[RMDB]
RNA sequence: GGGAACGACUCGAGUAGAGUCGAAAACUCACUCAUGAAAGCUCUGCUCCAUGCUAGCACAAAUGAGGCGAUCUGUGUGGCGUACCGCUCGUUCUUCACCCAGUCUGAAUUUGACUGAACAGUAGCAAGUAGAAGAUUGUCACAUUCUGCAGAAAGACGAUGUAGUGAUAUUCGUAUCACUACAUCGAAAAGAAACAACAACAACAAC
Reactivity to DMS in 0.01 (KOAc 150mM, MgCl2 10mM, bicine 150mM(pH8.5), 24C), signal-to-noise 3, nucleotides 027 to 156: c020u000c030a100c040u010c030a110u000g000a100a140a140g000c010u000c050u000g020c010u000c070c060a110u000g030c030u000a090g020c000a090c030a080a090a080u010g010a120g000g020c070g010a050u000c050u000g010u000g000u000g000g020c030g020u000a080c040c050g010c050u010c040g010u000u000c050u000u000c020a100c060c030c040a070g000u000c020u000g020a000a190u010u000u000g010a060c020u000g000a040a100c080a060g020u000a080g020c030a060a040g000u000a060g020a070a100g010a100u000u000g010u000c000a100c060a140u000u030c020u000g000c020a090g000a050a050a120g000a200
Reactivity to 2A3 in 0.01 (KOAc 150mM, MgCl2 10mM, bicine 150mM(pH8.5), 24C), signal-to-noise 9, nucleotides 027 to 156: c020u010c020a040c020u050c010a070u080g100a120a080a020g010c010u060c050u110g020c010u050c130c030a110u190g000c030u050a030g010c030a030c030a080a100a060u090g010a040g060g000c050g040a080u030c040u040g040u010g010u030g050g010c020g020u050a070c030c050g010c060u030c030g050u080u010c000u050u060c030a060c040c040c000a000g020u000c010u050g140a220a250u160u220u110g010a030c010u010g030a080a030c040a060g060u110a020g030c080a090a020g020u070a030g060a100a010g040a100u050u120g040u070c010a010c010a090u110u030c030u120g010c020a030g090a070a100a030g070a040

Source: RMDB library OK3TST, as collected in RNAgym. Structure probing data (DMS and 2A3) for a 207-nucleotide construct. For 2A3 the reverse transcriptase was SuperScript II with manganese. DMS adducts were read by reverse transcription with MarathonRT. For DMS, 7,476 sequencing reads were counted.